[RMDB]
RNA sequence: GGGAACGACUCGAGUAGAGUCGAAAACCUACUCAAUACGUCCUCGUCGUACAGAACGGUAACAAGUUUUCCGAACAUCCGCGCUUGGGUAUACGAGUAUACACCUUACCCAACCCUCGCCAACGGGAGUGCAUCCACGAGUUCGCUCGUGGAUGAAUGCAAAUACUUAUUUCGAUAAGUAUUUGCAAAAAGAAACAACAACAACAAC
Reactivity to 2A3 in 0.01 (KOAc 150mM, MgCl2 10mM, bicine 150mM(pH8.5), 24C), signal-to-noise 7, nucleotides 027 to 156: c010c000u020a050c030u050c060a070a090u080a120c020g060u050c010c020u040c020g050u020c020g020u060a080c040a110g100a160a040c020g030g030u100a070a050c070a170a080g030u060u030u070u040c030c010g040a060a030c030a120u040c030c040g040c000g000c080u030u040g020g000g020u050a050u030a070c070g020a030g080u020a020u050a050c080a100c020c030u080u110a050c000c010c010a040a070c030c000c010u040c030g030c040c040a080a070c040g030g000g020a060g030u070g040c000a000u000c000c000a000c000g010a000g010u060u050c180g040c070u010c000g000u000g000g000a000u000g000a000a010
Reactivity to DMS in 0.01 (KOAc 150mM, MgCl2 10mM, bicine 150mM(pH8.5), 24C), signal-to-noise 4, nucleotides 027 to 156: c020c010u010a050c040u020c040a080a160u000a060c040g010u000c010c010u000c030g030u000c090g080u000a120c060a090g010a070a140c020g010g010u000a070a120c080a090a140g020u000u000u010u000c010c000g010a100a100c040a100u000c000c010g030c050g040c040u000u000g010g010g010u000a050u000a110c060g000a100g030u000a120u000a090c130a090c100c040u000u000a050c020c000c000a090a070c030c020c020u000c130g000c050c040a080a070c060g000g020g000a090g010u000g000c020a030u000c010c010a000c000g000a030g010u000u010c300g030c010u000c010g040u000g010g010a000u010g010a010a080